This 177-nucleotide RNA was probed chemically with DMS and 2A3.
RNA sequence: GGGAACGACUCGAGUAGAGUCGAAAAGGGCAGUUUUAUUUGACGACGGAGGCUACCCCGCCGUAGUUUUUUUAUUAUGGCGGAAAGUAUCCGAGGUAGCAGGAUACGAAUUCGUCGUUGCUGCCCAGGGCGGUCUGUUCUUCGGGACGGACUGCCCAAAAGAAACAACAACAACAAC
Reactivity to DMS in 0.01 (KOAc 150mM, MgCl2 10mM, bicine 150mM(pH8.5), 24C), signal-to-noise 4, nucleotides 027 to 126: g000g010g010c010a000g000u010u040u020u020a080u030u030u040g010a010c000g000a010c010g000g000a010g000g000c160u020a110c250c100c000c000g000c000c000g020u000a010g010u000u000u030u070u040u060u010a010u000u000a000u000g000g000c000g000g000a050a020a140g010u000a020u020c010c020g000a120g000g010u030a050g050c100a240g010g000a040u000a010c010g000a080a160u000u000c000g020u000c000g020u000u000g000c000u000g000c000c000c010a030
Reactivity to 2A3 in 0.01 (KOAc 150mM, MgCl2 10mM, bicine 150mM(pH8.5), 24C), signal-to-noise 9, nucleotides 027 to 126: g010g000g010c020a020g010u060u060u120u170a280u110u210u140g020a010c000g000a000c000g010g010a020g090g000c030u060a070c020c020c000c000g000c000c000g000u010a000g000u000u010u010u000u030u030u050a030u010u000a000u010g000g000c000g000g050a030a020a010g060u070a060u040c010c020g020a040g060g050u080a070g040c080a040g020g020a020u050a060c040g030a040a110u010u020c000g000u000c000g000u000u030g000c000u000g000c000c000c000a000

Description
The RNA was probed in 150 mM KOAc, 10 mM MgCl2 and 150 mM bicine (pH 8.5) at 24 C. For 2A3 the reverse transcriptase was SuperScript II with manganese. The DMS profile rests on 18,496 reads.